[RMDB]
RNA sequence: GGGAACGACUCGAGUAGAGUCGAAAAACAUAGUUUGGCCGACGUCAUACCAUUGAAGACGAAUCGUUAAAGACACCAGCUCGUCUUAUAGGACCCCAUUUAGCAAAAACAGUCCUGUAGGAACCAAGAAACUUACCAGUUUCGACUGGUAAGUUUCAAAAGAAACAACAACAACAAC
Reactivity to DMS in 0.01 (KOAc 150mM, MgCl2 10mM, bicine 150mM(pH8.5), 24C), signal-to-noise 2, nucleotides 027 to 126: a060c090a080u000a070g000u020u020u010g030g030c040c010g000a090c040g000u000c030a060u010a130c080c090a060u010u010g000a070a070g010a070c080g000a040a080u000c060g010u000u000a060a060a180g010a150c070a050c050c010a050g000c030u000c090g010u010c020u010u000a030u000a050g010g000a010c010c030c030c070a110u000u000u000a100g000c150a040a060a020a080a040c210a140g010u000c020c000u000g000u000a020g000g000a030a070c100c090a100a150
Reactivity to 2A3 in 0.01 (KOAc 150mM, MgCl2 10mM, bicine 150mM(pH8.5), 24C), signal-to-noise 2, nucleotides 027 to 126: a000c030a040u180a070g020u060u110u080g040g010c050c010g020a020c020g000u020c010a050u100a170c000c040a100u080u200g110a100a000g020a020c030g010a040a070u020c010g040u040u110a100a080a000g070a040c020a030c040c040a000g030c050u030c040g050u000c030u000u030a030u010a030g000g010a030c000c020c010c020a050u150u110u070a070g030c020a000a000a040a000a110c020a000g030u020c000c000u010g010u010a020g010g010a020a000c030c010a080a040